[RMDB]
Chemical mapping of a 177-nucleotide RNA with 2A3 and DMS. Reactivities are rounded to 0.1 and cut off at 0 and 3. As a SHAPE reagent, 2A3 marks flexible, mostly unpaired nucleotides at the ribose 2'-OH. The reactions ran in a buffer of 150 mM KOAc, 10 mM MgCl2 and 150 mM bicine (pH 8.5), at 24 C. For 2A3, 1,450 sequencing reads were counted. The DMS profile rests on 2,676 reads.
RNA sequence: GGGAACGACUCGAGUAGAGUCGAAAAGAAGAGAAUAAGCGCGGAUAUUUCUGUCGGUAGAGCGGCAGGACCGACACCUGCGAGUAAAGGGAUCAAGACCCUGUUCGCGCAAAGAUUGAAGUAGAAGCCGCCUAUAUUACUUCGGUAAUAUAGGCGGAAAAGAAACAACAACAACAAC
Reactivity to 2A3 in 0.01 (KOAc 150mM, MgCl2 10mM, bicine 150mM(pH8.5), 24C), signal-to-noise 3, nucleotides 027 to 126: g100a060a020g070a000g030a100a090u190a240a070g000c010g000c000g010g020a030u010a060u080u230u060c060u040g010u020c000g040g040u100a050g020a030g100c000g040g000c010a000g000g030a030c020c000g020a000c000a070c000c000u040g040c050g020a030g010u070a060a060a020g020g020g020a070u190c070a030a020g030a100c000c000c010u010g010u030u020c000g000c000g000c000a010a000a040g040a060u070u160g070a090a020g020u070a060g010a110a010g040
Reactivity to DMS in 0.01 (KOAc 150mM, MgCl2 10mM, bicine 150mM(pH8.5), 24C), signal-to-noise 2, nucleotides 027 to 126: g010a150a050g010a130g000a050a090u030a100a130g010c000g000c010g000g050a080u010a040u070u000u000c020u020g000u000c010g010g000u010a100g000a130g030c010g010g030c000a020g010g000a040c040c010g000a050c110a090c090c030u000g030c000g000a100g030u030a140a070a010g000g000g010a080u030c130a120a110g010a150c010c010c000u000g000u000u000c010g020c010g010c040a090a100a110g010a080u020u010g000a070a290g000u010a030g000a120a110g010